[RMDB]
RNA sequence: GGGAACGACUCGAGUAGAGUCGAAAAAUUGUGAGACCUCCGGCUACAACACAGGACAUGGGAGCUUUUCUGAACCCUCGUGUCUUGUGUUGCAGCCAGAGGGGCACAUCACCCCGAUUCGUCGGGGGGAUGAGCACAGCUUCGGCUGUGCUCAUCCAAAAGAAACAACAACAACAAC
Reactivity to DMS in 0.01 (KOAc 150mM, MgCl2 10mM, bicine 150mM(pH8.5), 24C), signal-to-noise 1, nucleotides 027 to 126: a060u000u000g020u000g000a060g030a140c000c000u000c000c050g020g020c000u000a010c000a000a000c010a000c000a020g000g010a000c000a010u000g010g020g020a030g000c100u000u000u010u030c300u020g030a070a080c010c010c010u010c000g030u000g000u010c000u000u000g020u010g000u000u000g020c010a010g000c000c000a000g000a000g020g020g000g020c020a040c000a010u020c100a300c000c000c000c000g010a040u000u020c180g020u000c000g000g020g010g010
Reactivity to 2A3 in 0.01 (KOAc 150mM, MgCl2 10mM, bicine 150mM(pH8.5), 24C), signal-to-noise 2, nucleotides 027 to 126: a010u100u050g010u000g000a110g080a140c000c000u000c000c010g010g000c010u000a010c000a020a000c000a000c000a010g000g010a000c000a000u010g010g020g010a050g080c090u160u160u200u160c150u190g120a100a070c010c010c010u020c020g020u000g000u000c000u000u010g010u000g000u000u000g000c010a000g000c000c000a000g000a010g000g000g010g010c020a000c000a030u040c040a100c000c000c000c000g020a020u050u100c230g040u000c000g070g010g000g010